[RMDB]
RNA sequence: GGGAACGACUCGAGUAGAGUCGAAAAGAUAUGGACCUCCCUCUUUCUUGGACCUCAGGUCGGAAACGACCUGAGGCUAGAAAUGGAGGUCCUAAGUCAAACUGGGGUUAGUUCGCUAACCCCAGAAGAUAAUCGAACUCUUCGGAGUUCGAUUAUCAAAAGAAACAACAACAACAAC
Reactivity to DMS in 0.01 (KOAc 150mM, MgCl2 10mM, bicine 150mM(pH8.5), 24C), signal-to-noise 1, nucleotides 027 to 126: g000a060u000a300u000g010g010a010c000c000u000c000c010c030u000c030u000u010u000c010u000u000g000g000a190c020c000u000c000a010g000g000u000c000g020g000a110a100a230c000g030a010c000c000u000g010a000g010g030c000u000a000g000a000a160a010u010g000g000a000g000g000u010c000c000u010a020a050g000u010c010a080a060a300c000u000g000g010g010g010u000u000a030g000u000u010c180g020c010u020a010a000c000c000c000c000a000g000a040a060